An RNA of 177 nucleotides, treated with DMS and read out base by base. Source: RMDB library OK2TRN, as collected in RNAgym. Conditions: 150 mM KOAc, 10 mM MgCl2 and 150 mM bicine (pH 8.5), 24 C.

RNA sequence: GGGAACGACUCGAGUAGAGUCGAAAAGCAGCGCACACGACAUUAAUAGUCCCAAUACCUAAGUUUGGUGCACUAUCUAACACCACAACAUCAUAACUAUCCCAGACUGACUCAAUAGCAGCACGUAAGUGCAAAGACUCUUCGGAGUCUUUGCACUAAAAGAAACAACAACAACAAC
Reactivity to DMS in 0.01 (KOAc 150mM, MgCl2 10mM, bicine 150mM(pH8.5), 24C), signal-to-noise 3, nucleotides 027 to 126: g020c120a040g020c040g010c020a030c050a090c090g020a040c010a100u000u000a090a070u000a140g000u000c010c020c010a110a080u000a070c060c090u010a070a070g010u000u000u000g020g030u010g020c120a070c040u000a050u000c090u010a090a090c110a050c020c050a060c060a070a050c060a020u000c030a070u000a070a080c120u000a110u000c010c000c000a120g010a070c040u000g000a070c090u000c040a060a080u000a050g000c030a010g010c080a050c140g000u000a040